[RMDB]
RNA sequence: GGGAACGACUCGAGUAGAGUCGAAAACAGCCAUAUAGACAGCCUGGGAGUCAGCCCUUACUGGAGCCCACAAGGUAAUCCAGGGGGUAAUGGUAAACCCGGUAAUGUCGGUGGUAAUGAUGCUCUAGAUGGUAAUAAGCUUCGGCUUAUUACCAUCAAAAGAAACAACAACAACAAC
Reactivity to 2A3 in 0.01 (KOAc 150mM, MgCl2 10mM, bicine 150mM(pH8.5), 24C), signal-to-noise 2, nucleotides 027 to 126: c000a000g000c010c020a020u210a020u100a200g020a000c000a000g080c040c040u170g030g030g000a050g040u000c000a020g000c030c000c000u010u110a080c000u010g000g000a000g000c010c000c000a150c030a100a000g000g010u050a130a080u000c000c000a000g000g000g000g000g000u020a120a090u010g000g000u040a070a070a030c010c000c000g020g020u130a210a080u020g000u000c010g000g020u000g000g010u050a130a100u150g060a030u110g000c020u030c020u040a060
Reactivity to DMS in 0.01 (KOAc 150mM, MgCl2 10mM, bicine 150mM(pH8.5), 24C), signal-to-noise 2, nucleotides 027 to 126: c110a220g020c000c000a020u000a100u020a180g000a010c000a090g040c120c000u000g030g000g030a160g010u000c010a040g010c020c010c000u000u010a120c000u010g000g000a000g010c010c000c040a140c300a150a240g000g020u030a110a140u000c000c000a010g010g010g000g000g000u010a010a060u000g000g000u040a070a070a040c040c000c040g000g000u000a060a050u000g020u010c000g000g000u000g000g000u000a120a090u010g000a090u010g000c020u000c000u000a300
Structure probing data (2A3 and DMS) for a 177-nucleotide construct. The RNA was probed in 150 mM KOAc, 10 mM MgCl2 and 150 mM bicine (pH 8.5) at 24 C. It was measured as part of the RMDB library RFMREP. The 2A3 profile rests on 1,665 reads. DMS adducts were read by reverse transcription with MarathonRT. The DMS profile rests on 1,080 reads.